Chemical mapping of a 177-nucleotide RNA with 2A3. For 2A3 the reverse transcriptase was SuperScript II with manganese.
[RMDB]
RNA sequence: GGGAACGACUCGAGUAGAGUCGAAAAUCAGCAAGUGAUUAAAAUUGGAUAUUUGCCGAUUACACAUUCAGCUAAUUUGAUGAUGACUAAAAAAUUAUUAUCACAAUACAAUCAUCCGAAAUAUAAAGCACCAUCUACGUUUCGACGUAGAUGGUGCAAAAGAAACAACAACAACAAC
Reactivity to 2A3 in 0.01 (KOAc 150mM, MgCl2 10mM, bicine 150mM(pH8.5), 24C), signal-to-noise 1, nucleotides 027 to 126: u070c010a000g020c000a060a160g100u010g000a030u300u150a000a180a180a300u130u060g070g000a080u070a090u290u000u100g000c040c040g000a000u000u000a030c030a010c000a170u070u070c040a000g000c090u070a000a130u230u200u070g050a060u000g000a000u090g020a090c030u020a000a000a000a270a270a000u040u040a040u000u030a000u000c000a000c000a100a010u100a000c040a000a010u000c000a000u000c000c000g010a010a140a040u160a000u270a050a130a000

Reactivities are rounded to 0.1 and cut off at 0 and 3. The RNA was probed in 150 mM KOAc, 10 mM MgCl2 and 150 mM bicine (pH 8.5) at 24 C.